[RMDB]
RNA sequence: GGGAACGACUCGAGUAGAGUCGAAAAAAACUCGAAAAGUUGAAUAUUCGUUCGGACGAAGUGUCGAAACCUUCGAAAGCUUCAAAAACCUUACAUGGCUAUGCUUUACCAUCACUAGCGUCACCUUAUGAUGUUCAUGCUGAAGAGAAGAUAGCAAUCGAUACUUUUAGUUCGCUAAAAGUAUCGAAAAAGAAACAACAACAACAAC
Reactivity to DMS in 0.01 (KOAc 150mM, MgCl2 10mM, bicine 150mM(pH8.5), 24C), signal-to-noise 2, nucleotides 027 to 156: a020a030a000c000u000c030g020a080a100a090a080g000u000u000g000a110a060u000a090u010u000c010g030u010u000c100g050g020a190c030g020a110a050g000u000g000u010c040g010a120a060a050c050c020u020u000c080g010a070a130a070g000c020u010u010c050a070a080a250a020a050c030c010u010u020a110c160a110u000g010g010c000u020a080u000g000c000u000u000u000a100c060c040a180u000c050a010c050u000a060g000c040g000u000c000a060c060c040u000u030a070u000g020a050u000g010u010u000c050a080u010g020c000u000g030a110a090g010a080g000a100a120g000a110u000a060g000c060a040a130
Reactivity to 2A3 in 0.01 (KOAc 150mM, MgCl2 10mM, bicine 150mM(pH8.5), 24C), signal-to-noise 2, nucleotides 027 to 156: a000a000a000c030u030c020g070a110a100a060a040g050u080u080g040a100a010u080a120u130u090c030g000u060u030c020g020g000a010c000g010a020a010g010u000g030u080c000g010a070a140a180c010c020u060u010c000g000a080a000a000g010c010u040u070c080a020a070a080a080a140c030c020u120u110a070c050a130u190g030g000c010u080a020u110g050c000u020u030u070a030c000c000a060u050c020a010c090u050a050g070c010g060u020c020a050c080c010u060u060a050u170g020a020u030g030u040u010c060a050u110g030c030u010g020a130a030g010a000g020a060a020g040a030u140a020g030c020a030a020